RNA sequence: GGGAACGACUCGAGUAGAGUCGAAAAGUUUGCCCGUCCGGGUAGAUACGGCGCGAACCGAUGUCAGUGGGGUGCUUGUGCCUUACAAUGAGCGUAUUGCGUUUAUGUGCCCUUCAGUCGAGAAGGGGAAGGCCGUUAUGCAAUGCGGUCCGGUUAGGUCUUCUUACCACUUCGGUGGUAAGAAGACAAAAGAAACAACAACAACAAC
Reactivity to 2A3 in 0.01 (KOAc 150mM, MgCl2 10mM, bicine 150mM(pH8.5), 24C), signal-to-noise 2, nucleotides 027 to 156: g010u020u030u030g000c040c020c010g010u090c130c000g040g020g130u170a060g020a100u140a200c040g000g030c010g010c030g230a020a000c000c000g040a040u080g070u190c120a100g020u000g010g000g000g000u010g040c090u120u170g080u100g070c000c000u010u100a040c090a120a280u150g020a030g000c000g000u000a040u020u050g010c000g060u040u050u140a220u050g090u150g020c010c000c000u010u040c070a150g000u200c130g060a080g050a300a040g120g020g010g030a010a010g070g010c030c030g000u000u010a000u040g100c050a070a100u030g000c040g000g000u030c000c030g000g070u000u060a090g010

The data come from the RNA Mapping Database (RMDB), library OK3TST. This 207-nucleotide RNA was probed chemically with 2A3. 2A3 adducts were read by reverse transcription with SuperScript II with manganese. Conditions: 150 mM KOAc, 10 mM MgCl2 and 150 mM bicine (pH 8.5), 24 C. Values are in units of 0.01, from 0 to 300, in steps of 10.